[RMDB]
RNA sequence: GGGAACGACUCGAGUAGAGUCGAAAAUCGUGUGGGCGGGAUUUUGCAGCGGACCCCCUAUUUUCUAUAGGAGGGAGGAGUACACAUCGACGGUUUGUUGUGCGAUGGAGUCCCACGAGAACUCGGAUCCGUCCAACUAAUUCGUUAGUUGGACGGAAAAAGAAACAACAACAACAAC
Reactivity to DMS in 0.01 (KOAc 150mM, MgCl2 10mM, bicine 150mM(pH8.5), 24C), signal-to-noise 1, nucleotides 027 to 126: u000c020g010u040g000u020g070g000g000c050g040g030g010a090u000u000u000u000g030c110a110g000c140g010g000a260c000c000c000c000c000u010a010u000u000u020u050c230u010a020u010a000g020g000a070g000g000g030a100g000g000a140g000u000a070c090a110c070a020u000c010g000a050c070g040g000u000u000u010g020u010u000g020u000g040c020g010a040u000g000g000a300g020u000c000c010c000a060c040g000a090g020a070a110c050u000c040g010g000a180

The record gives the reactivity of an RNA of 177 nucleotides to DMS. The reactions ran in a buffer of 150 mM KOAc, 10 mM MgCl2 and 150 mM bicine (pH 8.5), at 24 C. It was measured as part of the RMDB library OK2TST. Reactivities are given for positions 27 through 126.